[RMDB]
RNA sequence: GGGAACGACUCGAGUAGAGUCGAAAAGCGACUACCUUCGGGUAGUCGCAAAUAAAUUCAGCGGUAAUUCGUGGCGAAAUAUUACCGCUGAUCGCCUCGAAAAAAGCCUAGACUUCGGUCUAGGCAAGUGAUGAAUUAAGUUCGCUUAAUUCAUCACAAAAGAAACAACAACAACAAC
Reactivity to DMS in 0.01 (KOAc 150mM, MgCl2 10mM, bicine 150mM(pH8.5), 24C), signal-to-noise 5, nucleotides 027 to 126: g010c000g010a010c000u000a000c000c000u010u020c170g030g020g030u000a000g010u000c000g000c000a000a020a030u000a050a090a080u000u000c000a010g000c000g010g010u000a000a020u000u000c090g020u010g010g010c090g000a060a110a070u000a090u000u000a010c010c000g010c000u000g000a000u000c190g000c030c010u000c170g020a010a050a080a090a130a110g010c000c000u000a000g000a020c000u000u010c180g010g010u000c000u000a010g000g010c000a010a010
Reactivity to 2A3 in 0.01 (KOAc 150mM, MgCl2 10mM, bicine 150mM(pH8.5), 24C), signal-to-noise 5, nucleotides 027 to 126: g000c000g000a000c010u000a000c010c000u030u070c200g060g000g000u010a000g000u000c000g000c000a000a000a000u010a000a000a010u040u010c000a000g000c000g020g000u010a010a020u050u110c080g090u180g210g060c110g060a090a050a010u160a020u020u000a000c000c000g000c000u000g000a000u000c010g020c000c010u070c050g050a090a090a010a020a060a010g000c000c000u000a000g000a000c010u020u040c300g070g000u000c000u000a000g000g000c000a000a000
Source: RMDB library M2PK50, as collected in RNAgym. Chemical mapping of a 177-nucleotide RNA with DMS and 2A3. The DMS profile rests on 8,285 reads. Conditions: 150 mM KOAc, 10 mM MgCl2 and 150 mM bicine (pH 8.5), 24 C. As a SHAPE reagent, 2A3 marks flexible, mostly unpaired nucleotides at the ribose 2'-OH.